An RNA of 177 nucleotides, treated with DMS and 2A3 and read out base by base. Values cover nucleotides 27 to 126. It was measured as part of the RMDB library OK2TST. DMS adducts were read by reverse transcription with MarathonRT.

RNA sequence: GGGAACGACUCGAGUAGAGUCGAAAAAUCGCGCACAGGGAGACCCGUUUUCCCACGAUUCUGCUUCCCCGGGUGGAGCAAGGGUUCGCUCCCUAUCUCCAGUUGGUGGCAGGGUGGAAUCUCCUCGGUAUUCAAAGCUGUUCGCAGCUUUGAAUACAAAAGAAACAACAACAACAAC
Reactivity to DMS in 0.01 (KOAc 150mM, MgCl2 10mM, bicine 150mM(pH8.5), 24C), signal-to-noise 1, nucleotides 027 to 126: a080u000c060g030c070g000c050a070c080a150g000g000g010a090g000a060c000c040c020g020u000u000u000u000c000c000c010a240c170g000a050u000u000c010u010g000c030u000u000c030c130c070c000g000g010g010u010g000g000a010g000c220a070a020g000g000g010u000u000c300g020c230u000c000c000c000u000a110u000c010u000c010c000a010g000u010u010g000g010u010g020g000c210a040g000g010g000u000g000g000a050a090u000c010u010c020c020u000c170g000
Reactivity to 2A3 in 0.01 (KOAc 150mM, MgCl2 10mM, bicine 150mM(pH8.5), 24C), signal-to-noise 1, nucleotides 027 to 126: a010u010c020g000c000g030c020a060c030a060g100g000g000a010g020a040c040c010c000g010u010u020u020u010c000c000c010a000c040g000a000u010u040c000u000g000c000u080u030c040c000c020c040g120g010g070u010g020g000a010g050c030a050a030g030g000g040u090u090c070g060c190u070c000c000c010u030a140u050c000u000c010c030a300g300u030u030g040g040u100g050g000c110a080g000g040g040u020g030g030a010a060u020c050u070c030c030u010c050g030